Conditions: 150 mM KOAc, 10 mM MgCl2 and 150 mM bicine (pH 8.5), 24 C.
The record gives the reactivity of an RNA of 207 nucleotides to 2A3 and DMS.
DMS adducts were read by reverse transcription with MarathonRT.
2A3 adducts were read by reverse transcription with SuperScript II with manganese.
It was measured as part of the RMDB library OK3TST.

RNA sequence: GGGAACGACUCGAGUAGAGUCGAAAAAGUUAGACUAAAAUUGAAUUGUGACUAUUUAUUCUAAAUGGAGAAUUCGGUAGAUAUCAACGAUUUCCUAUCCGAUCAUGAGUAUAGCAGCUACGACGAGGAGAUGGUCUCAGAGGAACUCGAACCUAGCACCACCUCAUUUAUUCGUAAAUGAGGUGGUAAAAGAAACAACAACAACAAC
Reactivity to 2A3 in 0.01 (KOAc 150mM, MgCl2 10mM, bicine 150mM(pH8.5), 24C), signal-to-noise 3, nucleotides 027 to 156: a000g060u050u060a010g000a070c070u100a080a080a100a120u060u080g050a050a060u060u050g020u060g050a020c020u020a050u120u140u050a080u150u060c050u090a080a070a050u060g050g040a080g060a100a090u070u030c010g020g010u030a020g000a100u070a030u160c040a060a110c100g040a010u010u040u080c010c030u040a030u070c040c020g020a040u060c020a070u080g030a000g080u080a030u080a150g050c060a000g000c020u020a010c040g050a010c050g030a020g020g000a040g010a030u070g010g040u000c050u000c080a050g020a010g020g040a010a020c020u010c040g040a030a040c010c020u010a020g070c010
Reactivity to DMS in 0.01 (KOAc 150mM, MgCl2 10mM, bicine 150mM(pH8.5), 24C), signal-to-noise 2, nucleotides 027 to 156: a080g010u020u010a080g000a130c040u000a070a070a210a160u010u010g020a100a120u000u010g010u000g000a130c050u000a070u000u000u020a050u030u010c050u010a020a060a080u000g010g020a200g000a040a080u000u000c030g000g030u000a060g010a100u000a100u000c000a040a070c020g000a110u000u000u000c030c030u000a130u010c020c020g000a110u000c050a070u000g020a070g000u000a040u010a070g030c040a060g020c010u010a000c040g020a090c050g030a130g000g020a060g010a060u000g000g060u010c020u000c060a080g000a090g030g030a050a060c040u020c060g010a070a080c040c020u010a110g020c140